[RMDB]
RNA sequence: GGGAACGACUCGAGUAGAGUCGAAAAAGCGUAGCGGUACGCCGCUACGCAAGGCGCAUUUGAACUGUUUUGUACGCCUUGCAUAAAGCAAAAGUACUAAAAAAACGUGCCGUUACGACGGCACGAAAAAACAUCCAUUGGUUCGCCAAUGGAUGAACCACUAUGUUUGCUUCGGCAAACAUAGUGGAAAAGAAACAACAACAACAAC
Reactivity to 2A3 in 0.01 (KOAc 150mM, MgCl2 10mM, bicine 150mM(pH8.5), 24C), signal-to-noise 2, nucleotides 027 to 156: a020g010c000g020u000a010g000c000g010g010u030a030c300g070c020c000g000c000u000a000c000g000c000a000a010g000g000c040g010c030a060u080u140u190g060a160a120c120u120g110u080u120u060u100g020u030a010c010g000c000c000u000u000g000c010a070u130a240a210a050g010c050a060a000a030a000g010u020a030c130u220a000a050a030a010a000a000a020c010g000u010g000c000c000g000u000u030a060c300g010a010c000g050g000c000a000c000g000a010a000a000a000a000a000c000a000u000c000c000a000u010u000g010g010u040u040c190g040c070c000a000a000u010g000g000a000u000g000a010a000